This 177-nucleotide RNA was probed chemically with 2A3 and DMS. 2A3 adducts were read by reverse transcription with SuperScript II with manganese.

RNA sequence: GGGAACGACUCGAGUAGAGUCGAAAACGCGUCAGAUUCGUCUGACGCGAAAGCAUAGAACACCGCUAUCAUGUAUUAUAGUUCUAUGCAACUAUAGCGCUAAAACGAUACCGUUCGCGGUAUCGAAGAAAGAGUUUAGUUUCGACUAAACUCUUUCAAAAGAAACAACAACAACAAC
Reactivity to 2A3 in 0.01 (KOAc 150mM, MgCl2 10mM, bicine 150mM(pH8.5), 24C), signal-to-noise 9, nucleotides 027 to 126: c010g000c000g000u000c010a010g010a030u030u070c100g050u010c090u000g000a000c000g000c000g000a000a000a000g000c000a000u000a000g010a010a010c040a030c080c090g010c100u120a150u300c090a130u230g180u170a140u210u140a120u160a080g010u000u000c000u010a020u000g000c000a010a000c020u080a030u110a180g120c060g040c230u140a080a070a030a060c010g000a000u000a000c000c000g020u030u040c220g000c000g090g000u000a000u000c000g000a020a010
Reactivity to DMS in 0.01 (KOAc 150mM, MgCl2 10mM, bicine 150mM(pH8.5), 24C), signal-to-noise 5, nucleotides 027 to 126: c030g010c000g010u000c000a010g000a040u000u010c180g010u000c000u010g000a010c010g020c000g000a010a020a110g010c000a010u010a010g000a030a020c030a160c200c100g000c090u000a080u010c180a070u000g020u010a090u000u000a090u000a070g000u010u000c000u010a010u010g010c020a060a070c080u000a060u000a050g010c140g020c250u000a050a050a090a130c010g000a010u000a000c000c000g010u000u010c210g010c010g010g010u000a000u000c000g010a030a070